[RMDB]
RNA sequence: GGGAACGACUCGAGUAGAGUCGAAAACGAGCGCUUCGGCGCUCGAAAAAAGCGUACUACUUGCUAGUCUCCUCACUACCCACCUGUAUCCCAAAUAGGAUACAGAGGUGAGGGACUUGGACCAAGUAUCGCAAAAACCACUGUUUCGACAGUGGAAUCAAAAUGUUUUGUUCGCAAAACAUUUUGAAAAAGAAACAACAACAACAAC
Reactivity to 2A3 in 0.01 (KOAc 150mM, MgCl2 10mM, bicine 150mM(pH8.5), 24C), signal-to-noise 3, nucleotides 027 to 156: c010g000a000g010c020g020c060u120u220c300g100g000c010g000c000u060c020g020a020a020a000a000a000a000g040c040g020u110a100c060u000a000c000u040u030g010c010u010a000g010u000c160u110c060c010u010c000a010c010u170a160c050c040c030a050c020c010u010g020u000a010u020c040c010c030a160a300a240u270a200g000g000a000u000a000c000a010g010a010g000g010u000g000a000g010g000g000a000c000u000u080g020g030a050c050c070a000a010g000u010a020u300c050g000c000a080a100a000a000a010c000c020a000c000u000g020u040u230u110c180g070a020c010a000g000u010g000g000a000a060
Reactivity to DMS in 0.01 (KOAc 150mM, MgCl2 10mM, bicine 150mM(pH8.5), 24C), signal-to-noise 2, nucleotides 027 to 156: c000g000a010g030c000g120c010u000u010c290g090g000c030g030c000u050c010g000a000a010a060a100a080a080g020c010g010u020a060c190u000a010c010u020u010g000c010u000a020g010u000c000u000c010c000u010c000a000c020u000a030c020c000c020a300c200c000u050g030u010a030u010c010c000c040a030a130a220u030a060g000g010a010u000a020c000a000g010a080g040g010u010g010a010g010g010g000a010c000u000u010g000g000a120c100c030a010a000g010u000a010u000c020g040c010a060a060a000a170a170c000c000a010c000u000g000u010u000u000c300g030a070c010a040g000u000g000g000a000a040